[RMDB]
RNA sequence: GGGAACGACUCGAGUAGAGUCGAAAAAUCUUCACAACUAAUUGCAUUCUCUCACGUCAUCAAAGACCUAUCCUCUAUUCCGCUCAUCUUUUUGAAGAUACAUGGAGUCAGUUGCAUUGAAGAGGCCUACAAGAGUGGUUUUCGAACCACUCUUGUAAAAAGAAACAACAACAACAAC
Reactivity to 2A3 in 0.01 (KOAc 150mM, MgCl2 10mM, bicine 150mM(pH8.5), 24C), signal-to-noise 1, nucleotides 027 to 126: a000u000c020u050u050c010a010c040a120a060c040u130a110a060u100u120g060c030a050u040u000c030u000c000u030c050a060c090g050u020c000a120u050c040a120a090a060g030a080c000c000u050a060u080c020c010u000c010u090a140u110u000c030c000g020c040u060c050a080u020c040u070u080u070u070u220g160a080a020g020a010u060a070c050a080u120g030g000a010g020u030c000a030g000u020u070g020c100a080u050u060g010a010a000g050a020g080g000c000c010
Reactivity to DMS in 0.01 (KOAc 150mM, MgCl2 10mM, bicine 150mM(pH8.5), 24C), signal-to-noise 3, nucleotides 027 to 126: a060u000c010u010u000c010a080c060a020a030c030u010a070a070u020u010g010c040a040u010u000c070u000c040u000c070a110c130g010u010c030a060u000c110a090a090a080g000a070c050c050u000a070u000c030c020u010c070u000a130u000u000c050c020g010c070u020c070a030u000c010u010u000u000u000u010g010a050a060g010a040u010a070c120a050u000g010g000a070g010u000c040a060g010u000u000g010c080a100u010u010g020a040a060g010a070g020g000c050c040